[RMDB]
RNA sequence: GGGAACGACUCGAGUAGAGUCGAAAACCAGAUGACGGUCCUGCCAUGAGACCGCAACGAGAGCAUAUCGCAUCGAAUGGACUCGGGGAGUCGGCAGCUUGCCCCACGGAUGAGCGCCUAAUGCCGGAAGAGACGUGCAACUUCGGUUGCACGUCAACGGUUUAAAAUGAUUCGUCAUUUUAAACCGAAAAGAAACAACAACAACAAC
Reactivity to DMS in 0.01 (KOAc 150mM, MgCl2 10mM, bicine 150mM(pH8.5), 24C), signal-to-noise 2, nucleotides 027 to 156: c010c020a200g000a070u000g020a110c000g000g030u000c030c040u010g050c020c200a080u000g010a090g010a030c010c020g000c000a090a100c050g010a090g020a170g010c080a100u020a060u010c050g010c010a090u010c020g010a100a190u010g020g000a080c050u000c020g020g000g040g010a130g020u000c020g020g010c030a100g000c050u020u000g010c030c000c010c060a160c080g000g000a060u000g000a070g000c030g020c020c020u000a050a080u000g010c010c020g000g000a120a120g000a210g000a010c000g050u000g000c000a000a040c010u000u000c270g030g030u010u010g000c010a000c010g000u000c000a000a040
Reactivity to 2A3 in 0.01 (KOAc 150mM, MgCl2 10mM, bicine 150mM(pH8.5), 24C), signal-to-noise 5, nucleotides 027 to 156: c010c010a010g070a150u140g060a080c020g000g000u010c000c020u060g120c070c040a140u150g020a040g000a080c010c020g020c050a050a050c070g050a010g000a040g050c050a060u180a040u250c080g010c060a030u050c050g070a090a060u090g030g030a020c030u020c090g000g010g000g010a030g060u070c000g010g000c000a030g020c030u070u140g080c000c000c020c030a040c070g030g010a100u110g010a020g030c040g040c020c010u080a120a030u080g020c010c000g010g030a070a010g110a010g000a040c000g000u000g000c000a000a000c000u040u070c130g090g000u010u000g000c000a000c000g000u000c000a000a000